Conditions: 150 mM KOAc, 10 mM MgCl2 and 150 mM bicine (pH 8.5), 24 C. Chemical mapping of a 177-nucleotide RNA with 2A3 and DMS. Reactivities are rounded to 0.1 and cut off at 0 and 3. For DMS the reverse transcriptase was MarathonRT. For 2A3 the reverse transcriptase was SuperScript II with manganese. The DMS profile rests on 1,450 reads. For 2A3, 1,126 sequencing reads were counted.

RNA sequence: GGGAACGACUCGAGUAGAGUCGAAAAAAAGAAGGAUUUUCGCCGCUAAACUGUGACCAAAUCGAAUUUGGUAGCAAAUAUCAUAAUGAAAUUUUUGUUCGUAUUCGACGUAUUCAGUACACGGGUAUCGUGACGUACUAUUCGUAGUACGUCACGAAAAAGAAACAACAACAACAAC
Reactivity to 2A3 in 0.01 (KOAc 150mM, MgCl2 10mM, bicine 150mM(pH8.5), 24C), signal-to-noise 2, nucleotides 027 to 126: a000a020a000g100a040a070g030g030a050u080u010u040u080c020g000c060c010g000c020u060a020a200a220c020u080g040u080g090a080c030c050a060a060a050u130c020g000a030a060u060u080u130g170g000u030a020g030c020a010a030a010u060a030u080c040a040u080a290a150u190g080a070a080a110u120u130u000u010u050g030u000u030c000g020u030a010u020u030c030g000a010c040g060u030a100u010u120c010a020g030u000a050c020a000c050g010g030g080u030a050
Reactivity to DMS in 0.01 (KOAc 150mM, MgCl2 10mM, bicine 150mM(pH8.5), 24C), signal-to-noise 2, nucleotides 027 to 126: a020a040a100g010a090a070g030g010a130u000u010u000u000c070g030c020c020g010c050u000a100a090a100c070u000g020u020g000a110c100c090a070a130a110u000c040g000a010a250u000u000u000g010g030u000a050g010c010a020a030a010u000a090u000c040a070u010a030a090u000g010a030a070a120u000u000u000u000u000g000u020u000c010g000u000a020u000u000c010g010a010c100g000u000a100u010u010c020a010g010u000a110c150a080c050g010g000g030u000a120